RNA sequence: GGGAACGACUCGAGUAGAGUCGAAAACAACAGCGUAAUCGCGUCUUGACGUGAUCUAGUUAGCAAUGACUGUAUGCUAACUCAAUUGUGUGUCAUACACAAUACGCUGUUCUACAGUCAUUGAUACGAAAUUGUGGAAUUUCGAUUUUACAAUUUCAAAAGAAACAACAACAACAAC
Reactivity to 2A3 in 0.01 (KOAc 150mM, MgCl2 10mM, bicine 150mM(pH8.5), 24C), signal-to-noise 9, nucleotides 027 to 126: c020a000a000c000a000g000c000g000u000a010a000u000c000g000c000g010u000c040u080u250g140a010c000g000u000g000a000u000c010u020a000g000u000u000a000g000c000a010a050u110g000a000c000u000g000u010a010u020g000c000u000a000a000c000u010c060a020a060u000u000g000u000g000u000g110u110c040a040u110a170c000a000c000a000a000u020a010c000g000c000u000g000u000u000c000u010a000c000a000g000u000c000a020u020u160g060a040u050a050c060
Reactivity to DMS in 0.01 (KOAc 150mM, MgCl2 10mM, bicine 150mM(pH8.5), 24C), signal-to-noise 9, nucleotides 027 to 126: c070a030a020c000a010g000c000g020u000a100a020u000c000g020c000g000u010c080u020u020g010a020c000g020u000g000a010u000c300u000a020g010u000u000a010g000c000a020a060u020g010a010c000u000g010u000a060u000g000c020u000a010a000c000u000c210a090a040u000u000g010u000g000u000g020u040c260a130u050a040c000a000c000a010a010u000a000c000g000c000u000g000u000u010c130u010a010c010a000g000u000c000a140u040u020g010a130u040a090c160

An RNA of 177 nucleotides, treated with 2A3 and DMS and read out base by base. Values cover nucleotides 27 to 126. 2A3 adducts were read by reverse transcription with SuperScript II with manganese. The 2A3 profile rests on 100,481 reads. The RNA was probed in 150 mM KOAc, 10 mM MgCl2 and 150 mM bicine (pH 8.5) at 24 C. For DMS, 42,527 sequencing reads were counted.